Chemical mapping of a 177-nucleotide RNA with 2A3 and DMS.
The reactions ran in a buffer of 150 mM KOAc, 10 mM MgCl2 and 150 mM bicine (pH 8.5), at 24 C.
[RMDB]
RNA sequence: GGGAACGACUCGAGUAGAGUCGAAAAAACAUCUGCAUAUGUUUCUAAUGUUGACUUACUAUAUGUAGAUGUUGUAGAGUUAUCAUCUUUACUGAUAUUACCCUCUUCUUUUGGAGUAUCUUCAUCUCCGGAUAUUAUACUUCGGUAUAAUAUCCGGAAAAGAAACAACAACAACAAC
Reactivity to 2A3 in 0.01 (KOAc 150mM, MgCl2 10mM, bicine 150mM(pH8.5), 24C), signal-to-noise 8, nucleotides 027 to 126: a000a000c000a000u000c000u000g000c000a000u000a000u020g040u030u120u050c080u150a300a260u270g160u280u150g120a090c050u110u100a020c040u070a000u010a000u010g000u010a000g000a010u000g010u000u040g000u020a010g000a020g020u060u140a120u170c050a010u030c030u040u100u060a080c070u050g090a050u030a080u120u120a140c000c030c010u040c050u100u050c030u050u230u090u190g040g020a060g020u080a100u060c050u070u080c080a150u020c040u000
Reactivity to DMS in 0.01 (KOAc 150mM, MgCl2 10mM, bicine 150mM(pH8.5), 24C), signal-to-noise 1, nucleotides 027 to 126: a010a000c000a000u010c000u000g020c000a020u000a000u000g000u000u000u000c020u020a070a240u140g020u000u040g000a210c300u000u030a060c050u030a030u020a000u000g010u000a000g000a030u000g040u000u000g010u020a050g010a080g040u000u000a080u000c110a050u000c060u000u090u090a080c110u000g000a020u020a050u110u000a090c010c030c050u000c030u000u040c090u010u020u020u000g000g000a180g000u000a050u000c080u050u000c110a080u000c050u000
For DMS, 1,288 sequencing reads were counted.